[RMDB]
RNA sequence: GGGAACGACUCGAGUAGAGUCGAAAAGCAUUCCACUUCGGUGGAAUGCAAAUGCCGGCUGCAAGAAAAGUGCUUGAAAGAGUGGGAGCACUGCCGAAGAAAAAAGUUCCAUGUUCGCAUGGAACAACCUUAUCUAAUCCUUCGGGAUUAGAUAAGGAAAAGAAACAACAACAACAAC
Reactivity to 2A3 in 0.01 (KOAc 150mM, MgCl2 10mM, bicine 150mM(pH8.5), 24C), signal-to-noise 4, nucleotides 027 to 126: g010c000a000u000u020c000c010a000c010u030u040c130g080g000u000g000g000a010a000u010g000c010a000a010a010u110g050c000c010g030g020c030u070g020c070a090a040g050a170a160a020a020g020u030g010c000u100u100g180a210a150a070g160a070g060u160g050g130g020a010g010c000a000c010u010g010c000c010g060a110a130g050a050a110a010a020a000a020g000u000u000c000c000a010u000g050u030u060c220g010c060a010u010g000g000a000a000c000a000a000
Reactivity to DMS in 0.01 (KOAc 150mM, MgCl2 10mM, bicine 150mM(pH8.5), 24C), signal-to-noise 3, nucleotides 027 to 126: g000c000a010u000u000c000c000a000c010u000u020c190g060g030u000g020g000a010a000u000g010c000a000a020a030u010g010c080c000g030g020c020u000g000c160a060a050g010a060a060a090a070g000u000g010c010u010u000g000a090a120a090g000a150g020u000g010g000g000a040g000c020a010c000u000g000c050c030g000a100a150g010a000a030a060a070a090a130g000u000u000c010c000a020u000g010u000u020c210g020c000a010u010g000g000a000a000c000a060a060